[RMDB]
RNA sequence: GGGAACGACUCGAGUAGAGUCGAAAAGGAGACGCGCGCUAGCCAUGCUAGGACAUGUACUAUCUAGGAUCUGCUAGCCAUGUCAUCAUGGUGCGUCGCUAGCACGAUCUAGUACCAUGGUACCUAGACAGCGGUGUGAUUUCGAUCACACCGCUGUAAAAGAAACAACAACAACAAC
Reactivity to 2A3 in 0.01 (KOAc 150mM, MgCl2 10mM, bicine 150mM(pH8.5), 24C), signal-to-noise 1, nucleotides 027 to 126: g050g010a030g030a010c070g020c000g000c000g050c070u030a030g070c020c100a070u240g040c040u020a000g040g010a000c000a000u030g030u020a000c020u050a050u250c050u140a130g000g150a010u000c010u010g000c000u000a000g000c020c000a020u040g060u070c010a000u030c010a000u220g170g000u000g010c000g000u010c020g000c000u010a040g000c000a020c110g000a010u000c010u000a010g000u000a020c030c040a060u120g060g020u100a120c000c010u000a030g010
Reactivity to DMS in 0.01 (KOAc 150mM, MgCl2 10mM, bicine 150mM(pH8.5), 24C), signal-to-noise 1, nucleotides 027 to 126: g020g010a110g000a040c050g010c030g000c050g000c040u010a030g010c020c200a050u000g010c020u000a000g020g020a060c030a000u010g000u000a120c050u000a020u010c120u030a110g010g000a010u000c030u000g000c000u000a000g020c020c040a050u010g000u030c030a040u000c050a040u010g010g030u000g000c010g010u000c120g000c000u000a010g000c000a010c220g000a010u000c020u030a050g020u000a050c080c040a030u050g010g000u000a080c020c060u010a050g000

The data come from the RNA Mapping Database (RMDB), library OK2TRN. This 177-nucleotide RNA was probed chemically with 2A3 and DMS. For 2A3, 1,619 sequencing reads were counted.